The data come from the RNA Mapping Database (RMDB), library OK3TST. Structure probing data (2A3 and DMS) for a 207-nucleotide construct. 2A3 adducts were read by reverse transcription with SuperScript II with manganese. High 2A3 reactivity points to a flexible backbone, as in loops and unpaired stretches.
RNA sequence: GGGAACGACUCGAGUAGAGUCGAAAAAUCUACAAGACCCCGUACGUGCCCAUAGACAAGGAGGUGAAGAUCGACGGGUUUUACAUGCGCAUGACCCUGAAAGUGCUGACCCUGAGCGACGAUCUGGGGGUGUACCGCAACGACAGGAUGCACCGCGUCCAAAGAUAGAUUUCGAUCUAUCUUUGGAAAAAGAAACAACAACAACAAC
Reactivity to 2A3 in 0.01 (KOAc 150mM, MgCl2 10mM, bicine 150mM(pH8.5), 24C), signal-to-noise 3, nucleotides 027 to 156: a000u060c040u080a060c040a070a060g050a190c030c050c010c020g010u030a060c020g030u020g010c010c010c030a100u110a030g070a040c060a090a060g070g010a060g030g060u060g060a070a040g030a100u090c030g060a040c020g020g000g000u010u000u000u010a040c040a040u130g030c020g040c050a020u110g040a130c020c000c000u030g070a100a010a000g050u020g000c010u040g030a050c000c020c030u070g030a050g000c070g090a110c050g040a080u040c040u050g020g010g010g030g020u010g000u010a040c010c020g020c050a040a080c090g090a040c010a030g020g000a020u070g010c000a000c040c030g020c030g050
Reactivity to DMS in 0.01 (KOAc 150mM, MgCl2 10mM, bicine 150mM(pH8.5), 24C), signal-to-noise 3, nucleotides 027 to 156: a080u000c030u020a130c040a070a140g000a120c020c030c010c040g030u010a090c050g020u000g000c000c000c020a150u010a140g010a100c050a100a070g000g020a200g030g050u000g010a090a080g030a060u000c000g010a260c190g010g010g020u010u000u010u010a060c050a090u010g010c020g000c030a130u000g000a120c020c020c010u000g020a050a070a170g010u000g020c010u000g010a090c020c000c030u000g000a100g020c020g040a100c070g010a050u000c010u000g000g030g000g010g000u000g010u000a040c000c000g000c040a100a090c040g010a190c060a070g010g010a090u000g010c070a050c050c010g000c020g020